[RMDB]
RNA sequence: GGGAACGACUCGAGUAGAGUCGAAAAUUUGCAGAUUACACCCAGUGUGCUGUAAUUGCUGUUGUUGCUGCUGUUCUUAAUAGCUUGUGCAUCUGCUUUGUUACCUCUAUACCAUUGUGUAUAGUACUUACGUAUCUCUUCGGAGAUACGAAAAGAAACAACAACAACAAC
Reactivity to 2A3 in 0.01 (KOAc 150mM, MgCl2 10mM, bicine 150mM(pH8.5), 24C), signal-to-noise 4, nucleotides 027 to 129: u090u050u060g000c020a010g020a060u030u050a000c020a040c020c030c020a080g130u140g030u060g110c040u030g020u050a050a120u070u120g030c090u000g000u060u010g030u030u060g030c010u010g000c020u000g060u040u080c010u030u130a130a130u040a090g040c020u030u110g000u030g010c000a030u000c000u040g010c000u050u030u040g040u040u060a070c020c020u000c020u010a000u000a020c010c040a250u190u300g040u020g010u130a000u030a030g040u080a050c000u020u000a020
Reactivity to DMS in 0.01 (KOAc 150mM, MgCl2 10mM, bicine 150mM(pH8.5), 24C), signal-to-noise 4, nucleotides 027 to 129: u030u050u020g030c060a070g000a100u000u060a120c070a080c000c070c060a050g050u020g000u030g020c000u000g000u000a000a000u030u030g000c050u020g040u040u030g000u020u000g030c050u040g000c080u000g000u010u070c060u020u010a120a100u040a140g030c030u000u000g000u000g000c000a090u020c040u030g000c050u000u000u000g000u000u000a160c080c080u030c030u050a050u050a020c040c010a210u030u040g050u030g030u000a030u060a050g000u050a060c060u000u000a130